[RMDB]
Chemical mapping of a 177-nucleotide RNA with DMS and 2A3. For 2A3 the reverse transcriptase was SuperScript II with manganese.
RNA sequence: GGGAACGACUCGAGUAGAGUCGAAAAUAGUCCCGUAUCUUAGGUAGAAGGGAUGCCUAUCCAGAAAUAGGAUAGGUCGCAGUGGCAAGGGGACCCCGACUGUUUACCAAAAACACAGACCGCUGCUCGAUACACCAUGCUUCGGCAUGGUGUAUCGAAAAGAAACAACAACAACAAC
Reactivity to DMS in 0.01 (KOAc 150mM, MgCl2 10mM, bicine 150mM(pH8.5), 24C), signal-to-noise 1, nucleotides 027 to 126: u060a030g020u000c020c000c010g000u000a020u070c040u000u000a080g000g170u020a020g000a070a130g000g000g020a000u030g000c000c000u000a000u000c000c030a130g010a080a050a030u040a080g000g030a000u000a060g000g000u000c160g000c010a050g020u060g000g010c050a020a090g000g030g080g000a210c070c000c000c000g060a070c150u000g000u000u000u000a200c300c260a000a110a000a000a020c020a090c120a030g000a120c000c000g000c000u000g010c000u020
Reactivity to 2A3 in 0.01 (KOAc 150mM, MgCl2 10mM, bicine 150mM(pH8.5), 24C), signal-to-noise 1, nucleotides 027 to 126: u050a000g050u000c010c030c010g000u050a140u000c000u140u070a020g060g030u020a020g020a100a110g070g000g000a050u040g000c000c000u000a000u000c000c010a000g130a220a190a080u240a060g000g000a000u030a000g010g000u050c000g000c000a000g020u000g000g040c010a100a100g000g050g000g080a080c060c060c000c000g010a050c000u110g050u050u060u130a020c010c000a030a010a030a030a030c060a010c000a030g040a110c020c020g000c090u000g000c000u080